[RMDB]
RNA sequence: GGGAACGACUCGAGUAGAGUCGAAAAACAGCAUCGUACCAUGGACAUGACUGCAGUGCUAGCUAGUCAGUCUAGGAGCUGUGAUCCUGGUACGCAUACGAGCUAGCGGAUCGCUAGCGGAUCGUACGUGAGCCUUAUGCUUCGGCAUAAGGCUCACAAAAGAAACAACAACAACAAC
Reactivity to 2A3 in 0.01 (KOAc 150mM, MgCl2 10mM, bicine 150mM(pH8.5), 24C), signal-to-noise 2, nucleotides 027 to 126: a000c030a000g010c000a150u100c140g060u100a090c040c020a110u190g020g000a010c070a230u050g000a030c040u070g000c030a010g040u160g230c010u070a050g060c000u040a040g100u050c020a000g030u040c020u010a020g000g120a090g000c020u020g000u010g020a050u040c000c000u030g030g010u010a010c000g000c030a010u040a130c040g000a060g040c000u020a000g000c090g070g200a300u300c120g000c010u010a000g020c050g000g020a030u090c040g020u020a030c080
Reactivity to DMS in 0.01 (KOAc 150mM, MgCl2 10mM, bicine 150mM(pH8.5), 24C), signal-to-noise 1, nucleotides 027 to 126: a040c040a050g000c050a140u010c090g000u010a110c050c080a150u030g020g000a020c060a100u000g000a010c080u000g010c020a150g000u000g040c140u010a030g050c000u000a010g000u000c030a050g020u010c000u000a100g030g000a140g000c020u000g000u000g030a070u000c000c000u010g000g030u000a000c010g020c300a130u000a100c000g000a160g010c000u000a020g000c000g030g010a220u000c100g020c000u000a000g000c030g000g000a080u000c010g000u000a050c090
Source information:
Conditions: 150 mM KOAc, 10 mM MgCl2 and 150 mM bicine (pH 8.5), 24 C. An RNA of 177 nucleotides, treated with 2A3 and DMS and read out base by base. Reactivities are given for positions 27 through 126. 2A3 adducts were read by reverse transcription with SuperScript II with manganese.